Background
Structure probing data (2A3 and DMS) for a 207-nucleotide construct. The 2A3 profile rests on 2,177 reads.
RNA sequence: GGGAACGACUCGAGUAGAGUCGAAAAACUGCAUCUACGGAUGCAGAACUACGUUCAUCCAAUUUAUUUGGACGCAUGAAAUGAGAAUAGGGAACGGGAUUCUCAUACGCAUGCUACGGCCUGCGAAAAAACUCCUUAUGCUUCGGCAUAAGGAGAACGUUAUUGCUACCUUCGGGUAGCAAUAACGAAAAGAAACAACAACAACAAC
Reactivity to 2A3 in 0.01 (KOAc 150mM, MgCl2 10mM, bicine 150mM(pH8.5), 24C), signal-to-noise 3, nucleotides 027 to 156: a000c000u000g010c000a000u010c010u030a040c230g090g000a000u010g010c000a010g000a020a010c050u130a030c020g010u010u020c010a010u020c020c000a030a040u070u240u090a200u110u130u070g010g000a000c000g010c030a010u150g110a130a180a010u010g000a010g020a000a000u030a030g070g000g020a000a030c010g010g000g020a000u000u000c010u000c010a020u020a030c020g000c000a010u020g000c000u010a040c170g080g000c000c020u040g000c040g020a090a010a000a030a070a120c000u000c000c000u000u000a000u000g010c010u010u050c180g110g000c000a000u000a000a000g000g000a000g000a000a000
Reactivity to DMS in 0.01 (KOAc 150mM, MgCl2 10mM, bicine 150mM(pH8.5), 24C), signal-to-noise 1, nucleotides 027 to 156: a160c000u000g020c000a000u000c000u000a120c300g050g000a000u000g000c000a020g030a000a080c010u000a020c000g010u000u000c040a120u000c110c120a150a140u000u000u010a150u010u000u000g000g000a020c000g000c020a120u000g040a140a110a090u000g040a120g000a090a030u010a080g000g000g020a040a050c090g020g000g040a300u000u010c000u010c000a060u000a020c040g010c020a080u010g060c010u000a020c070g020g020c010c060u010g000c030g000a000a090a050a020a020a020c000u000c000c000u010u010a000u000g000c010u010u030c300g090g000c000a020u000a000a000g000g000a000g020a000a010
The reactions ran in a buffer of 150 mM KOAc, 10 mM MgCl2 and 150 mM bicine (pH 8.5), at 24 C.